The data come from the RNA Mapping Database (RMDB), library ARCHII. An RNA of 207 nucleotides, treated with DMS and 2A3 and read out base by base. DMS adducts were read by reverse transcription with MarathonRT. The DMS profile rests on 2,837 reads. For 2A3 the reverse transcriptase was SuperScript II with manganese. Reactivities are given for positions 27 through 156.
RNA sequence: GGGAACGACUCGAGUAGAGUCGAAAAGCGGGAAAGGUGCCCGGUACGAAUCCUGGGGUCGUCGCUGUACUCGUGCGAGUAAUCCACGAUGCUACAAGGCGCUAAGCAAUGGAAGUGAUUCUUGAGGGAAGCAAUUCUGCAGAGAUAUUUCCACCCUACAUAUUAAAAAGUUCGCUUUUUAAUAUGUAAAAGAAACAACAACAACAAC
Reactivity to DMS in 0.01 (KOAc 150mM, MgCl2 10mM, bicine 150mM(pH8.5), 24C), signal-to-noise 1, nucleotides 027 to 156: g020c020g030g030g000a050a070a110g030g010u010g020c030c000c000g000g020u010a250c080g010a130a140u000c070c030u000g000g000g000g010u000c030g020u000c010g050c120u000g010u000a020c050u000c020g040u010g000c210g000a090g050u010a120a210u010c000c000a030c010g000a010u000g000c030u000a050c040a020a090g000g040c020g010c070u000a070a120g030c030a090a090u030g000g010a060a060g010u000g000a100u000u000c020u000u010g010a130g010g030g010a100a070g010c080a040a110u000u000c020u000g030c020a160g010a150g000a120u000a040u010u000u000c000c020a090c060c020c010u000
Reactivity to 2A3 in 0.01 (KOAc 150mM, MgCl2 10mM, bicine 150mM(pH8.5), 24C), signal-to-noise 4, nucleotides 027 to 156: g050c010g020g020g060a060a110a100g120g020u070g090c020c030c020g000g060u100a040c050g030a070a070u060c010c030u070g000g030g000g000u050c010g000u020c010g030c150u010g000u010a010c010u010c010g000u010g030c170g010a030g050u160a060a150u020c000c000a010c000g020a020u060g000c030u000a010c000a030a040g030g000c000g010c060u070a050a020g020c030a050a070u090g020g010a030a030g030u050g090a150u140u020c020u050u080g030a110g020g030g020a030a020g030c020a030a140u060u020c030u070g040c030a020g020a000g020a060u020a050u070u020u000c010c000a040c010c000c000u010